RNA sequence: GGGAACGACUCGAGUAGAGUCGAAAAUUAAAAAGGAAGGAAAUUCUGACACAUGCUUCAACAUGGAUGAACCUUGAAAACAUGCUAAGUUAAAUAAGGCAAUCACAAAAGGACAAAUAUGAUUCCACUUAUGUGAGUGGUCAAGUUCAGGGAGACAACAUUGCUGCAUGUUCGCAUGCAGCAAUGUAAAAGAAACAACAACAACAAC
Reactivity to 2A3 in 0.01 (KOAc 150mM, MgCl2 10mM, bicine 150mM(pH8.5), 24C), signal-to-noise 1, nucleotides 027 to 156: u020u010a000a000a000a010a000g040g000a000a000g000g030a000a000a160u110u110c070u080g100a040c000a020c000a120u040g080c020u150u090c060a100a080c070a090u100g060g070a010u060g010a060a220c020c000u020u040g080a050a050a000a000c040a000u150g120c040u170a180a000g000u020u030a080a040a150u060a030a000g000g000c000a000a030u040c000a020c060a000a040a020a040g070g000a010c000a070a080a000u170a070u090g120a110u130u000c020c020a010c020u090u020a010u090g200u090g060a000g000u020g000g000u000c020a030a030g000u000u000c020a020g080g100g000a060g000a000c010a060